[RMDB]
RNA sequence: GGGAACGACUCGAGUAGAGUCGAAAAGCCUCAUAUACAUGAACGACUGAUGUAGAGUUCGGUUGGGGAGAUAAGUAUCUAAUGCGUGUCAUUAGGUCACCUCGGUAUGAUUAGUGUGAGAGCUAGGGGCUAAUUGGCAUUUCGAUGCCAAUUAGCCAAAAGAAACAACAACAACAAC
Reactivity to DMS in 0.01 (KOAc 150mM, MgCl2 10mM, bicine 150mM(pH8.5), 24C), signal-to-noise 1, nucleotides 027 to 126: g000c080c000u000c020a060u100a040u050a060c050a030u000g010a130a040c000g010a120c020u000g020a110u010g000u020a090g020a230g050u000u000c000g000g010u000u020g000g000g000g010a060g000a120u030a070a120g030u080a000u000c000u000a010a030u000g010c040g000u040g010u020c000a020u000u000a000g000g010u000c030a080c040c010u000c010g000g000u000a050u010g020a130u010u000a140g000u040g020u000g000a040g000a080g040c010u000a050g020g000
Reactivity to 2A3 in 0.01 (KOAc 150mM, MgCl2 10mM, bicine 150mM(pH8.5), 24C), signal-to-noise 2, nucleotides 027 to 126: g010c020c000u000c120a030u060a010u010a120c060a080u130g000a200a000c020g090a010c000u050g010a050u130g180u110a010g010a040g130u130u140c000g000g020u050u000g000g000g050g020a060g000a010u160a100a040g220u250a000u000c000u000a000a000u030g020c190g040u110g090u300c010a000u000u000a040g000g000u000c000a040c000c000u000c080g000g000u120a000u040g190a160u150u050a000g050u000g000u000g080a000g020a000g000c000u010a000g010g160